This 177-nucleotide RNA was probed chemically with 2A3 and DMS. For 2A3 the reverse transcriptase was SuperScript II with manganese. 2A3 is a SHAPE reagent: it acylates the 2'-hydroxyl of flexible nucleotides of all four kinds. The data come from the RNA Mapping Database (RMDB), library OK1LIB. The DMS profile rests on 29,366 reads.
[RMDB]
RNA sequence: GGGAACGACUCGAGUAGAGUCGAAAAGUAUUCGCCGGGAUAUCCGCUGAACACGUAAGGAGUCGGUGGAAUUCGCGGACAAUUCGCUGGGACCCUCUUUACCGUACAUGGUAUUUAACGGAAUGGCAUUACUAAAUCACUUCGGUGAUUUAGUAAUAAAAGAAACAACAACAACAAC
Reactivity to 2A3 in 0.01 (KOAc 150mM, MgCl2 10mM, bicine 150mM(pH8.5), 24C), signal-to-noise 9, nucleotides 027 to 126: g040u030a080u050u100c080g000c010c000g020g030g020a030u070a160u060c000c000g000c010u020g070a160a020c060a010c100g180u230a140a170g110g110a140g060u040c050g000g000u020g010g020a030a040u030u030c130g000c010g230g020a020c020a020a070u080u080c060g000c060u060g000g050g090a090c010c000c000u020c020u020u070u060a100c010c000g030u060a070c060a190u160g030g060u140a140u060u130u060a110a050c050g030g080a110a100u070g070g010c050
Reactivity to DMS in 0.01 (KOAc 150mM, MgCl2 10mM, bicine 150mM(pH8.5), 24C), signal-to-noise 9, nucleotides 027 to 126: g020u010a060u020u010c150g000c020c010g010g000g010a040u000a140u000c000c010g020c010u000g010a060a030c040a150c090g010u040a120a110g010g010a110g020u000c010g000g030u000g000g010a030a300u010u010c020g000c010g000g000a060c100a050a070u020u020c070g010c030u000g000g000g010a130c040c020c010u010c050u010u000u000a050c020c020g010u020a120c170a090u050g000g000u010a040u020u020u020a080a080c090g000g000a070a050u020g000g010c190